[RMDB]
Conditions: 150 mM KOAc, 10 mM MgCl2 and 150 mM bicine (pH 8.5), 24 C. An RNA of 177 nucleotides, treated with DMS and 2A3 and read out base by base. The 2A3 profile rests on 1,009 reads. Reactivities are given for positions 27 through 126. Source: RMDB library OK2TRN, as collected in RNAgym.
RNA sequence: GGGAACGACUCGAGUAGAGUCGAAAAGGAUCCUCUCACAGGAUUGUCUCUGUGUGCCGAAACUCCAACAGUAUUGCUUCGGUACACCUACAGCAAUACUGUAGGUAUAGAGAGUAGGAGAGGAUCGUCGUGCAGCAGGGUUCGCCCUGCUGCACGAAAAAGAAACAACAACAACAAC
Reactivity to DMS in 0.01 (KOAc 150mM, MgCl2 10mM, bicine 150mM(pH8.5), 24C), signal-to-noise 2, nucleotides 027 to 126: g000g010a020u000c010c000u000c000u010c020a200c080a130g020g010a180u030u020g000u000c000u000c000u000g000u000g000u000g030c010c000g010a010a040a070c070u000c250c140a080a160c240a040g000u000a200u000u010g020c040u000u000c080g000g000u010a030c090a030c030c060u000a020c040a010g050c060a060a070u010a300c010u000g000u000a000g000g000u010a050u010a000g000a020g000a040g000u000a180g020g000a030g000a010g020g010a000u000c040g010
Reactivity to 2A3 in 0.01 (KOAc 150mM, MgCl2 10mM, bicine 150mM(pH8.5), 24C), signal-to-noise 1, nucleotides 027 to 126: g140g010a010u000c000c010u030c000u030c010a190c040a050g200g000a140u130u190g130u010c000u000c000u060g030u010g000u030g020c000c000g000a020a010a090c100u040c080c020a120a090c010a150g070u070a090u090u160g000c000u000u020c000g040g030u040a030c040a070c040c030u000a010c030a030g010c060a070a020u110a230c000u000g000u020a010g000g010u010a020u150a020g060a000g020a010g030u070a050g030g030a000g000a010g010g020a000u010c000g000